Structure probing data (2A3 and DMS) for a 177-nucleotide construct. Reactivities are given for positions 27 through 126. 2A3 adducts were read by reverse transcription with SuperScript II with manganese.

RNA sequence: GGGAACGACUCGAGUAGAGUCGAAAAACAGCACUGUACGCAGUGCUGAUAAAAAUGAGGCCUUCUCUUCCCACUUCUUCCCAGAGUCAGGAAAAGCUGGGUUGAGAGGGUAGAAAAAAAAUGAUAACGAUGUUAGUACUUUCGAGUACUAACAUCGAAAAGAAACAACAACAACAAC
Reactivity to 2A3 in 0.01 (KOAc 150mM, MgCl2 10mM, bicine 150mM(pH8.5), 24C), signal-to-noise 4, nucleotides 027 to 126: a000c010a000g010c010a000c000u010g030u060a020c290g010c120a010g000u000g000c000u000g000a010u140a000a120a020a010a030u280g050a050g120g040c010c000u000u000c000u000c000u000u010c000c000c000a000c000u010u030c020u010u040c030c010c030a110g060a050g270u170c140a060g030g000a000a000a000a010g050c150u020g000g000g000u000u010g000a000g000a000g000g010g010u030a010g050a010a030a000a000a000a010a010a000u240g060a090u100a140a040
Reactivity to DMS in 0.01 (KOAc 150mM, MgCl2 10mM, bicine 150mM(pH8.5), 24C), signal-to-noise 3, nucleotides 027 to 126: a080c000a000g000c030a000c000u000g000u020a150c200g030c020a010g020u030g000c020u030g000a020u020a010a050a080a110a080u030g000a240g000g020c000c000u000u000c010u000c000u000u000c000c000c000a070c020u000u000c160u010u000c010c000c080a190g000a180g010u050c300a190g000g000a020a010a040a000g030c190u000g000g000g000u000u000g000a010g010a010g020g010g010u010a000g010a030a010a000a040a140a080a080a070u020g000a170u020a060a180
The reactions ran in a buffer of 150 mM KOAc, 10 mM MgCl2 and 150 mM bicine (pH 8.5), at 24 C.